[RMDB]
RNA sequence: GGGAACGACUCGAGUAGAGUCGAAAAGCUGAGUGUGGUUUGCGGAUCCUGGCCUUCCCGUGUAACCAGUUCGGGAAGCAGGAGCCAGGGAGUAACGAAGAGAUCAAAGAGUUCGCCGCGGGCUACAACGUCAAAUUCGAUAUGUUCAGCAAGAUCUACCACUCUCAAAGUUCGCUUUGAGAGUGGUAAAAGAAACAACAACAACAAC
Reactivity to 2A3 in 0.01 (KOAc 150mM, MgCl2 10mM, bicine 150mM(pH8.5), 24C), signal-to-noise 2, nucleotides 027 to 156: g010c040u010g010a010g030u000g030u030g000g000u000u000u050g010c000g010g050a040u100c020c000u030g030g010c000c020u030u020c040c000c020g000u000g020u010a120a130c070c070a110g090u170u120c010g020g000g000a000a000g040c080a150g000g120a020g000c010c020a020g000g000g000a080g000u070a020a040c030g000a090a060g000a060g030a140u130c050a050a050a050g090a020g030u030u040c020g000c000c000g000c000g000g000g020c000u000a010c000a080a010c010g060u090c070a040a130a160u160u110c050g050a010u010a030u210g130u040u030c030a000g010c030a040a030g000a080u000c010u010